[RMDB]
RNA sequence: GGGAACGACUCGAGUAGAGUCGAAAAAUAGUAUUUUUGAUAUGACAGCCUAAUAGAUGAUAUGAUUAUUUCAGUUGUCUUUGUUUGGAUAUCACAUUAACUGAUUGUAAAAUCAGUGUCAAAGCCCACAAAGUCAUUUGUUCGCAAAUGACUUUGUAAAAGAAACAACAACAACAAC
Reactivity to 2A3 in 0.01 (KOAc 150mM, MgCl2 10mM, bicine 150mM(pH8.5), 24C), signal-to-noise 6, nucleotides 027 to 126: a000u150a030g110u070a170u020u070u030u030u050g020a010u020a010u040g110a120c040a050g000c000c020u120a190a120u090a120g020a020u020g030a010u090a160u220g010a030u100u130a200u110u230u020c010a010g020u010u010g010u020c000u060u060u040g080u070u090u050g000g000a000u000a020u030c040a030c050a130u070u090a080a010c000u000g000a000u010u040g070u110a000a000a110a000u000c000a000g010u000g000u020c030a050a090a030g030c010c010c000
Reactivity to DMS in 0.01 (KOAc 150mM, MgCl2 10mM, bicine 150mM(pH8.5), 24C), signal-to-noise 4, nucleotides 027 to 126: a080u030a090g010u010a200u000u000u010u010u000g000a010u000a030u000g000a080c050a020g010c020c070u010a060a040u030a020g000a030u000g000a010u000a030u000g010a030u010u040a110u020u010u010c020a040g010u000u000g000u000c020u000u000u000g020u010u020u030g020g000a060u000a040u010c030a010c180a070u020u020a110a050c000u010g000a000u000u000g010u070a070a050a000a010u000c000a000g000u000g010u010c090a060a030a070g020c010c010c000
This 177-nucleotide RNA was probed chemically with 2A3 and DMS.
Conditions: 150 mM KOAc, 10 mM MgCl2 and 150 mM bicine (pH 8.5), 24 C.
Values cover nucleotides 27 to 126.
Values are in units of 0.01, from 0 to 300, in steps of 10.
The data come from the RNA Mapping Database (RMDB), libraries RFM100 and RFMREP.